[RMDB]
RNA sequence: GGGAACGACUCGAGUAGAGUCGAAAAACUCCUAUUCCAACACGUCCUCGUCGUACAGAGUGGUAACAUGUGUCACCACAUAUCCAAGCUUGGGUACUCGGGCUUGACCCAACCCCUUGGGCGGAUGAAAACCAGAUUACGUUCGCGUAAUCUGGAACUCUUGUUAGACGUUCGCGUCUAACAAGAGAAAAGAAACAACAACAACAAC
Reactivity to 2A3 in 0.01 (KOAc 150mM, MgCl2 10mM, bicine 150mM(pH8.5), 24C), signal-to-noise 4, nucleotides 027 to 156: a010c050u010c010c000u050a070u120u070c030c050a040a020c040a040c080g050u040c010c010u040c030g090u030c020g030u070a060c060a070g120a050g080u010g000g010u010a050a020c030a140u160g090u080g060u170c030a010c040c010a030c020a070u130a020u080c000c010a000a030g060c050u030u040g000g000g000u080a100c080u010c140g030g000g030c020u120u210g180a300c000c000c000a010a010c000c000c000c020u010u000g010g000g010c020g000g000a020u050g050a070a060a010a020c010c000a010g000a000u000u000a000c000g030u040u060c250g000c010g110u000a010a000u000c000u000g000g010a000a000
Reactivity to DMS in 0.01 (KOAc 150mM, MgCl2 10mM, bicine 150mM(pH8.5), 24C), signal-to-noise 1, nucleotides 027 to 156: a070c040u000c000c000u010a070u040u000c010c020a040a030c070a090c060g030u020c010c010u000c050g100u000c090g040u010a130c060a070g000a150g070u000g000g040u000a010a020c030a240u010g000u000g020u030c040a040c000c010a020c040a180u000a050u010c010c040a000a300g010c080u000u010g010g010g000u000a020c040u000c030g000g010g000c050u010u010g040a110c000c000c010a060a070c040c020c030c010u000u000g000g000g010c300g000g010a130u010g030a080a080a080a190c010c000a000g000a050u010u000a010c000g040u010u010c260g040c010g000u000a000a010u000c000u000g010g000a010a030